RNA sequence: GGGAACGACUCGAGUAGAGUCGAAAAAAAAAAGAUAUGGACGGUAAGAAGUCGCGGAAGAGGCAGCUCGGAAACGAGCUGCUACCCACCUUCCGAACUACGACCACUACCGUCCUAAGUCAAAAAACGUUACAUAUUACUUCGGUAAUAUGUAACGAAAAGAAACAACAACAACAAC
Reactivity to DMS in 0.01 (KOAc 150mM, MgCl2 10mM, bicine 150mM(pH8.5), 24C), signal-to-noise 2, nucleotides 027 to 126: a000a010a040a050a030a050g000a020u000a000u010g010g000a030c000g000g000u000a000a040g010a100a140g020u000c020g020c000g020g010a020a010g020a040g070g000c000a010g010c000u010c000g000g020a020a020a020c000g010a030g010c010u000g000c020u000a020c000c000c010a300c050c010u000u000c000c010g000a020a030c210u010a300c040g010a010c000c020a230c130u000a000c010c000g000u000c000c000u000a010a070g000u030c000a000a070a050a090a040a180
Chemical mapping of a 177-nucleotide RNA with DMS. DMS (dimethyl sulfate) methylates the pairing face of unpaired adenines and cytosines. Reactivities are given for positions 27 through 126.